[RMDB]
RNA sequence: GGGAACGACUCGAGUAGAGUCGAAAAAACCGUAAAUUCGUUUACGGUUAACCGCAACCGAGCCGAAAGGCAUUUUAUGCGAACGGUGGCGAAAGCCUAAAAUACCAUAGGCCUUCGGGCCUAUGAAGUUAGAGGAAGACUUCGGUCUUCCUCUAACAAAAGAAACAACAACAACAAC
Reactivity to 2A3 in 0.01 (KOAc 150mM, MgCl2 10mM, bicine 150mM(pH8.5), 24C), signal-to-noise 1, nucleotides 027 to 126: a000a000c020c000g000u020a020a000a020u080u090c140g050u130u000u000a000c000g020g020u020u000a040a010c050c010g040c040a020a010c020c040g070a060g000c010c000g090a130a000a000g000g000c010a010u000u090u020u030a090u110g040c000g030a050a050c010g000g000u030g000g030c020g000a140a000a000g000c010c000u060a080a080a050a090u120a050c030c030a010u000a000g000g040c040c000u010u060c190g040g000g000c000c040u000a000u000g010a030a040
Reactivity to DMS in 0.01 (KOAc 150mM, MgCl2 10mM, bicine 150mM(pH8.5), 24C), signal-to-noise 2, nucleotides 027 to 126: a050a030c000c000g010u000a010a000a090u000u010c180g030u000u000u000a020c010g010g010u000u000a040a070c090c010g020c060a060a040c040c000g000a170g000c010c010g020a090a070a120g020g030c010a040u000u000u000u010a050u010g010c100g000a070a140c030g010g010u000g010g000c010g000a090a110a100g010c000c020u010a060a030a040a060u000a070c190c020a010u000a000g010g010c000c000u020u000c230g070g010g020c020c000u000a000u000g000a080a070